An RNA of 177 nucleotides, treated with 2A3 and DMS and read out base by base. For DMS the reverse transcriptase was MarathonRT. It was measured as part of the RMDB library OK2TST.
RNA sequence: GGGAACGACUCGAGUAGAGUCGAAAAGAGUCUACCCAUCCAAGCAGUUUGACGUUCUGAAGGAUGACUAUGACUACGUGUUAAUCAGCAGCGUCCUCUUUGGCCUGGUUUUUGCCACCAUGAUCAAAGUUUUAUAGGGAUUCGUCCCUAUAAAACUAAAAGAAACAACAACAACAAC
Reactivity to 2A3 in 0.01 (KOAc 150mM, MgCl2 10mM, bicine 150mM(pH8.5), 24C), signal-to-noise 6, nucleotides 027 to 126: g030a000g000u020c010u010a030c020c010c010a000u010c010c010a100a140g010c010a020g020u070u170u200g120a060c060g050u130u010c020u040g030a050a020g040g010a020u030g020a030c020u060a040u190g030a030c010u040a080c100g090u110g040u120u110a080a100u060c040a000g020c000a000g030c010g070u040c000c010u040c020u060u050u070g030g010c000c020u030g040g020u020u050u010u100u170g050c000c010a030c010c010a060u070g040a020u140c070a110a060
Reactivity to DMS in 0.01 (KOAc 150mM, MgCl2 10mM, bicine 150mM(pH8.5), 24C), signal-to-noise 9, nucleotides 027 to 126: g010a050g000u000c010u000a300c300c050c000a060u000c020c030a050a130g020c040a030g000u000u000u000g020a130c210g010u000u000c020u000g010a080a080g000g000a040u000g010a080c030u000a120u000g000a040c020u010a050c100g000u000g010u000u010a070a090u000c070a070g000c070a060g020c050g010u000c020c030u000c070u000u000u000g000g010c050c040u010g010g010u000u000u010u010u000g000c070c040a090c070c040a060u010g000a090u000c080a070a100